[RMDB]
RNA sequence: GGGAACGACUCGAGUAGAGUCGAAAACCGCUACUCUUCGGAGUAGCGGAUACAUCUCGGCUCCGGGCCUUACCGUAGGACCAACGGUAAGGCCAGAGAUGAAGGGAGAGAUUUUCGAAUCUCUCAAUCGUCUAAGAAUGUUCGCAUUCUUAGACGAAAAAGAAACAACAACAACAAC
Reactivity to 2A3 in 0.01 (KOAc 150mM, MgCl2 10mM, bicine 150mM(pH8.5), 24C), signal-to-noise 3, nucleotides 027 to 126: c000c000g020c000u000a000c000u000c010u050u080c290g150g000a010g000u000a000g000c000g000g000a000u010a000c010a030u000c010u000c020g030g050c060u050c090c010g070g010g000c000c000u010u000a010c000c000g030u030a060g130g240a130c040c050a020a020c010g010g000u000a010a000g000g000c000c000a000g000a000g000a010u040g050a050a060g180g090g000a000g000a010g000a000u000u030u050u100c170g080a050a000u010c010u000c000u010c010a010a060
Reactivity to DMS in 0.01 (KOAc 150mM, MgCl2 10mM, bicine 150mM(pH8.5), 24C), signal-to-noise 4, nucleotides 027 to 126: c000c000g000c000u000a000c000u000c000u000u010c200g020g000a020g000u000a000g010c000g010g010a020u010a040c070a030u000c010u000c000g010g010c090u000c020c040g010g000g010c000c000u000u000a000c000c010g000u010a040g030g020a140c200c120a060a030c000g010g010u000a000a010g010g000c000c000a000g000a010g010a020u000g010a180a150g010g010g000a010g000a010g000a010u000u000u000u000c170g010a030a020u000c000u000c000u000c000a050a080
Chemical mapping of a 177-nucleotide RNA with 2A3 and DMS. It was measured as part of the RMDB library M2PK50. 2A3 is a SHAPE reagent: it acylates the 2'-hydroxyl of flexible nucleotides of all four kinds. DMS adducts were read by reverse transcription with MarathonRT.